[RMDB]
RNA sequence: GGGAACGACUCGAGUAGAGUCGAAAAUAGACAGGGUGUUUGCGAUAGCAUCCUGUUCUAGGUUGGUUUCUUAGCGAUUAUGGAGGGGUUGGACCCUCCUGGUGUGAGAAGGAAACACAUCAAAACACCCACGCAACUAAUUCGUUAGUUGCGUGGGAAAAGAAACAACAACAACAAC
Reactivity to DMS in 0.01 (KOAc 150mM, MgCl2 10mM, bicine 150mM(pH8.5), 24C), signal-to-noise 1, nucleotides 027 to 126: u020a000g000a000c000a000g000g040g020u000g050u000u000u000g000c290g000a070u160a010g000c000a000u010c000c000u000g010u020u000c050u000a000g000g000u010u000g000g000u000u000u000c000u000u000a120g020c070g040a130u010u000a050u000g000g000a100g000g020g000g000u040u080g020g000a250c040c000c000u030c000c000u000g000g030u000g000u000g000a020g000a140a130g050g000a030a050a110c000a000c010a100u000c080a070a000a140a030c300a290
Reactivity to 2A3 in 0.01 (KOAc 150mM, MgCl2 10mM, bicine 150mM(pH8.5), 24C), signal-to-noise 2, nucleotides 027 to 126: u000a000g000a000c000a020g020g000g000u000g050u000u050u110g120c120g050a040u100a040g000c020a000u000c000c000u000g000u000u000c000u000a040g040g000u040u050g000g020u020u030u040c000u000u000a090g150c110g060a120u110u100a050u300g020g010a000g000g040g060g000u000u280g300g000a300c000c000c020u000c000c000u000g000g000u000g000u020g000a140g020a030a110g110g080a000a020a010c000a000c000a000u020c000a000a020a000a030c010a000

Source: RMDB library RFM100, as collected in RNAgym. Chemical mapping of a 177-nucleotide RNA with DMS and 2A3. The RNA was probed in 150 mM KOAc, 10 mM MgCl2 and 150 mM bicine (pH 8.5) at 24 C. The DMS profile rests on 1,380 reads. DMS adducts were read by reverse transcription with MarathonRT. Reactivities are given for positions 27 through 126.